The record gives the reactivity of an RNA of 177 nucleotides to 2A3 and DMS. Reactivities are given for positions 27 through 126. For DMS, 1,741 sequencing reads were counted. DMS adducts were read by reverse transcription with MarathonRT.

[RMDB]
RNA sequence: GGGAACGACUCGAGUAGAGUCGAAAAUGAUUUGCUGCAAACCGCGACGAUUAAUGACAGCCUGAAAUUUGGUAAAGAAGUGCUCAACCGCAUGGGGAAAAUUAAUAAGCUGCACAAGAAUCGUGUCGGAUCAAUUUACUUUCGAGUAAAUUGAUCCAAAAGAAACAACAACAACAAC
Reactivity to 2A3 in 0.01 (KOAc 150mM, MgCl2 10mM, bicine 150mM(pH8.5), 24C), signal-to-noise 1, nucleotides 027 to 126: u080g040a050u020u050u170g030c040u030g030c040a060a070a070c010c030g000c010g010a030c020g000a000u060u120a090a040u100g040a040c020a010g020c010c000u050g050a080a080a080u070u080u050g040g040u100a060a180a030g060a080a000g040u030g020c020u030c060a030a070c070c050g000c070a050u040g000g000g000g060a040a040a040a040u060u040a070a080u070a090a010g020c020u020g000c070a050c010a060a070g070a100a050u070c060g000u010g080u090c090
Reactivity to DMS in 0.01 (KOAc 150mM, MgCl2 10mM, bicine 150mM(pH8.5), 24C), signal-to-noise 3, nucleotides 027 to 126: u000g000a070u000u010u020g010c040u000g000c050a060a070a090c120c010g000c180g000a040c040g020a100u000u000a070a070u000g010a210c060a070g000c020c050u010g020a150a040a040u000u010u000g010g010u010a040a080a080g010a130a090g030u000g020c010u000c050a100a070c180c090g000c040a040u000g000g010g020g000a070a040a030a040u020u000a080a130u000a110a130g000c030u010g020c060a030c080a070a090g010a080a060u010c050g010u000g030u020c160